[RMDB]
RNA sequence: GGGAACGACUCGAGUAGAGUCGAAAAGCUUCACUUUCUGCCACAACUACGUGCUCAUCAGCGCUCGGGGCACACGCGAGACCGCGGGACCCUCGCUCGGCUUCACCGACAUGAUCCGGCUGACGCUGCGUCAGGCACCAGGCGGCACCGAGUACGAACUGUCGUGUAAGUUCGCUUACACGACAGUAAAAGAAACAACAACAACAAC
Reactivity to 2A3 in 0.01 (KOAc 150mM, MgCl2 10mM, bicine 150mM(pH8.5), 24C), signal-to-noise 2, nucleotides 027 to 156: g040c030u130u130c060a070c090u100u120u030c020u080g100c100c000a070c000a180a070c040u180a040c070g000u020g000c000u020c020a180u010c030a060g040c040g010c000u060c060g010g000g000g000c000a020c020a010c090g040c000g030a110g040a190c060c000g000c040g030g010g050a060c030c010c000u050c060g010c000u020c030g010g040c010u060u070c050a030c000c030g070a060c060a180u170g050a180u170c100c020g000g050c110u040g030a070c040g080c080u050g000c020g040u040c030a030g080g030c040a020c020c020a020g010g000c000g040g000c000a010c020c070g030a000g030u060a010c120g050a070